[RMDB]
RNA sequence: GGGAACGACUCGAGUAGAGUCGAAAAAUCCGUACUCAUAUCCGCAUCAGGUCCUCAAGGUGAACAGCCUCUGGUUAAUAGAAUAAUGUAGAUAAGGGAAGUCGGCAAAAUAGAUCCGUAACUUAGGUCAUAUGGCCUCUUUCGAGAGGCCAUAUGAAAAAGAAACAACAACAACAAC
Reactivity to 2A3 in 0.01 (KOAc 150mM, MgCl2 10mM, bicine 150mM(pH8.5), 24C), signal-to-noise 2, nucleotides 027 to 126: a050u020c020c000g000u050a060c040u020c000a020u030a030u090c020c040g010c020a050u040c030a040g050g030u030c010c010u040c010a030a030g020g050u090g040a090a030c040a030g000c000c000u010c020u060g010g020u040u110a130a120u090a110g140a000a150u100a050a080u100g080u090a050g030a100u090a050a060g000g050g020a010a010g030u060c000g050g000c050a070a130a000a000u090a010g020a050u020c010c010g030u050a030a010c010u010u020a060g100g000
Reactivity to DMS in 0.01 (KOAc 150mM, MgCl2 10mM, bicine 150mM(pH8.5), 24C), signal-to-noise 3, nucleotides 027 to 126: a030u020c020c000g010u050a060c080u000c080a090u010a110u030c010c040g020c030a050u010c050a050g010g000u010c000c050u020c090a090a100g000g000u020g020a100a090c160a150g000c040c000u010c020u000g000g010u010u000a070a060u010a100g000a070a060u010a050a100u010g010u030a040g000a070u010a060a020g000g010g010a050a080g010u010c050g010g030c110a050a020a070a050u010a040g030a080u030c030c050g060u030a080a110c070u000u000a060g030g030
An RNA of 177 nucleotides, treated with 2A3 and DMS and read out base by base. DMS adducts were read by reverse transcription with MarathonRT. The reactions ran in a buffer of 150 mM KOAc, 10 mM MgCl2 and 150 mM bicine (pH 8.5), at 24 C. For 2A3, 1,313 sequencing reads were counted. It was measured as part of the RMDB library RFM100.